Source: RMDB library RFM100, as collected in RNAgym.
Chemical mapping of a 177-nucleotide RNA with 2A3 and DMS.
The 2A3 profile rests on 2,289 reads.
As a SHAPE reagent, 2A3 marks flexible, mostly unpaired nucleotides at the ribose 2'-OH.
For DMS the reverse transcriptase was MarathonRT.
The RNA was probed in 150 mM KOAc, 10 mM MgCl2 and 150 mM bicine (pH 8.5) at 24 C.
[RMDB]
RNA sequence: GGGAACGACUCGAGUAGAGUCGAAAAACGGACUAUACGUAGUCCGACAUGUGAGGUGGAGGUUGACGGGGGGUUUGCAAGUAUAAACCACUGCAAACUCAUCGUCAGCCUUCUCACCUUUCAUGAACAAGCGUACGCAGUUCGCUGCGUACGCUUGAAAAGAAACAACAACAACAAC
Reactivity to 2A3 in 0.01 (KOAc 150mM, MgCl2 10mM, bicine 150mM(pH8.5), 24C), signal-to-noise 3, nucleotides 027 to 126: a000c030g000g000a000c000u020a000u070a140c210g170u040a000g000u000c010c000g000a030c000a000u010g030u010g020a010g000g000u020g000g170a010g000g010u000u000g010a010c000g000g000g000g000g030g040u000u000u000g040c070a190a080g010u040a070u110a300a100a020c080c020a010c030u000g000c010a000a000a000c030u000c020a040u000c000g000u000c000a010g000c000c000u020u010c000u000c000a000c000c000u000u000u000c000a000u010g010a020a030
Reactivity to DMS in 0.01 (KOAc 150mM, MgCl2 10mM, bicine 150mM(pH8.5), 24C), signal-to-noise 1, nucleotides 027 to 126: a060c020g010g000a030c000u010a000u010a110c240g000u000a000g000u000c000c000g000a140c000a000u000g040u000g000a020g000g080u000g000g030a050g020g020u010u010g000a010c010g010g010g020g120g050g000u000u000u000g000c020a100a150g070u000a150u070a080a210a180c300c140a090c000u000g030c010a010a000a010c000u020c000a010u030c030g000u010c000a000g000c060c000u000u050c020u080c030a020c020c000u000u000u000c000a000u000g010a170a300